[RMDB]
RNA sequence: GGGAACGACUCGAGUAGAGUCGAAAAGAUAUGGACACAGAACUACCUCAAGCGAAGAACGCUAUCGGAAACGAUAGCGGGAGCUUGUGGCUGUGUCCUAAGUCAAACACCCGGUUCGCCGGGUGAACAGCUAAUAUCAGUUCGCUGAUAUUAGCUGAAAAGAAACAACAACAACAAC
Reactivity to DMS in 0.01 (KOAc 150mM, MgCl2 10mM, bicine 150mM(pH8.5), 24C), signal-to-noise 5, nucleotides 027 to 126: g000a040u000a300u010g000g010a020c000a010c010a000g000a060a040c070u010a300c020c000u000c010a000a010g000c020g000a100a130g000a110a170c010g000c000u000a000u000c000g000g000a100a090a140c010g010a000u000a000g000c000g000g000g000a040g000c000u000u000g010u000g010g000c000u000g000u000g010u000c000c000u000a020a080g010u000c030a100a140a250c000a010c000c000c000g000g010u010u010c180g020c010c000g010g010g010u000g000a020a080
Reactivity to 2A3 in 0.01 (KOAc 150mM, MgCl2 10mM, bicine 150mM(pH8.5), 24C), signal-to-noise 4, nucleotides 027 to 126: g020a020u080a030u160g010g000a000c000a000c010a020g070a110a060c100u160a090c270c010u040c020a010a000g000c020g190a300a020g020a080a010c000g000c010u000a000u000c000g030g040a110a070a040c010g000a000u000a000g010c010g000g010g000a000g000c000u010u030g000u020g020g000c010u000g020u000g000u000c000c000u000a000a000g010u000c000a040a100a060c010a000c010c010c000g000g030u060u040c300g030c050c000g000g000g000u010g000a030a020